[RMDB]
RNA sequence: GGGAACGACUCGAGUAGAGUCGAAAAGAUAUGGAGCCACCCAGGACAUGCUAGAGAGGGUCGGAAACGACCCACGAUAGCAACAGCCUGGUUGGCUCCUAAGUCAAAACAUACCUUCGGGUAUGAAUCAUCAUGGUUGGUUCGCCAACCAUGAUGAAAAAGAAACAACAACAACAAC
Reactivity to DMS in 0.01 (KOAc 150mM, MgCl2 10mM, bicine 150mM(pH8.5), 24C), signal-to-noise 1, nucleotides 027 to 126: g000a020u000a300u000g000g000a000g000c020c000a020c060c000c000a030g020g000a030c170a270u000g000c010u000a020g000a300g000a020g000g020g010u000c000g010g000a070a240a260c010g000a000c000c010c000a030c000g000a250u010a000g000c000a020a010c210a160g000c000c000u020g020g020u000u000g000g000c000u010c000c000u020a000a000g030u000c000a130a030a110a180c000a020u000a020c000c000u000u030c260g010g000g000u000a000u000g010a180a120